[RMDB]
RNA sequence: GGGAACGACUCGAGUAGAGUCGAAAACUUUUCACAGCUUGCUAAUAGCAGAACAGAAAAUAUCGUUUUACUUCCUAAAGAUGUGCGUACUUGGGAAUUAGAAAAGACCUACAUGAGUAAGUACGAGAGUAAGUUACCCUUUCGAGGGUAACUUACUAAAAGAAACAACAACAACAAC
Reactivity to 2A3 in 0.01 (KOAc 150mM, MgCl2 10mM, bicine 150mM(pH8.5), 24C), signal-to-noise 2, nucleotides 027 to 126: c000u060u020u030u070c060a040c030a060g050c050u080u070g000c030u120a140a090u100a300g000c010a020g040a060a020c040a040g130a050a050a010a010u110a060u120c020g000u020u010u020u030a070c040u000u030c000c000u070a120a110a010g100a000u170g090u090g190c010g000u000a010c010u020u000g010g040g020a030a030u050u040a030g120a090a180a020a000g000a010c010c010u010a030c080a180u160g010a030g060u020a030a010g010u020a010c000g050a010g000
Reactivity to DMS in 0.01 (KOAc 150mM, MgCl2 10mM, bicine 150mM(pH8.5), 24C), signal-to-noise 3, nucleotides 027 to 126: c050u000u000u000u000c030a120c150a130g010c040u000u000g030c040u010a120a110u020a130g020c010a010g020a110a080c140a180g000a060a070a060a040u010a060u020c120g000u010u010u010u000a070c110u000u000c010c010u000a030a060a100g010a100u020g020u020g020c050g000u000a030c010u020u000g000g000g000a080a030u010u000a130g010a050a050a070a100g000a150c040c000u000a040c230a020u000g000a180g020u010a020a020g010u000a030c050g000a170g040